This 207-nucleotide RNA was probed chemically with 2A3. It was measured as part of the RMDB library OK3TST. Reactivities are given for positions 27 through 156. The RNA was probed in 150 mM KOAc, 10 mM MgCl2 and 150 mM bicine (pH 8.5) at 24 C.
[RMDB]
RNA sequence: GGGAACGACUCGAGUAGAGUCGAAAAGACCAACGCUGCCUCACCGCAAUCAACUCACAAGCCACCAAAGAACGACCCGAUCUUAUCGUGUGUGAUGCCGGGGAGUGGAUGAUGCUUUCGACACAAGAGGCCAAGUGGUACCUUCGGGGAACGCCGACAAUAGCGCCGUCUUCGGACGGCGCUAUUGAAAAGAAACAACAACAACAAC
Reactivity to 2A3 in 0.01 (KOAc 150mM, MgCl2 10mM, bicine 150mM(pH8.5), 24C), signal-to-noise 2, nucleotides 027 to 156: g020a040c000c010a000a050c050g040c070u070g050c000c000u030c010a030c050c010g000c040a030a060u050c010a010a100c020u060c030a020c010a110a000g010c020c000a010c020c060a140a050a020g040a110a010c050g080a100c040c020c010g030a060u030c050u090u210a150u160c100g010u040g020u030g040u030g070a010u080g070c090c040g000g000g000g000a010g030u030g000g050a050u110g000a020u050g010c000u130u100u070c070g050a040c010a020c020a080a070g030a030g040g000c020c010a110a030g030u070g030g030u070a090c010c000u020u030c040g030g000g000g030a060a040c010g020c020c000g020a030